An RNA of 177 nucleotides, treated with 2A3 and DMS and read out base by base. The DMS profile rests on 2,714 reads. The RNA was probed in 150 mM KOAc, 10 mM MgCl2 and 150 mM bicine (pH 8.5) at 24 C.
[RMDB]
RNA sequence: GGGAACGACUCGAGUAGAGUCGAAAAAAGAUAUGGACGAUGUAGAGCUUGAUGACCGUAUAGAACCCUUGCUCGGAAACGAGCAAGGUCCCUAUACGCAAGAGCGAUUGCAUCGUCCUAAGUCAAACUUGUUUGGUAAGUUCGCUUACCAAACAAGAAAAGAAACAACAACAACAAC
Reactivity to 2A3 in 0.01 (KOAc 150mM, MgCl2 10mM, bicine 150mM(pH8.5), 24C), signal-to-noise 3, nucleotides 027 to 126: a010a010g080a020u090a060u150g000g000a000c000g000a010u030g080u200a030g020a020g090c000u120u040g010a220u100g010a300c070c020g010u010a000u000a010g040a070a070c000c030c010u000u010g000c010u000c000g010g030a030a100a020c010g000a010g010c000a000a000g010g000u010c000c000c000u000a010u000a010c020g010c030a300a220g000a000g030c030g180a300u100u210g000c010a000u010c000g000u000c000c000u000a000a010g010u030c000a030a000a050
Reactivity to DMS in 0.01 (KOAc 150mM, MgCl2 10mM, bicine 150mM(pH8.5), 24C), signal-to-noise 4, nucleotides 027 to 126: a100a070g000a050u010a300u010g010g000a010c000g000a010u000g010u000a020g000a300g010c000u000u000g000a130u010g000a140c300c010g000u000a000u000a010g010a090a220c300c000c000u000u020g000c000u010c000g010g010a120a050a140c010g030a010g010c000a010a000g000g000u000c130c300c000u000a010u000a000c000g010c040a050a090g000a010g010c000g010a190u010u020g000c010a020u000c010g000u000c000c000u000a000a070g010u000c050a100a120a140
As a SHAPE reagent, 2A3 marks flexible, mostly unpaired nucleotides at the ribose 2'-OH. DMS adducts were read by reverse transcription with MarathonRT.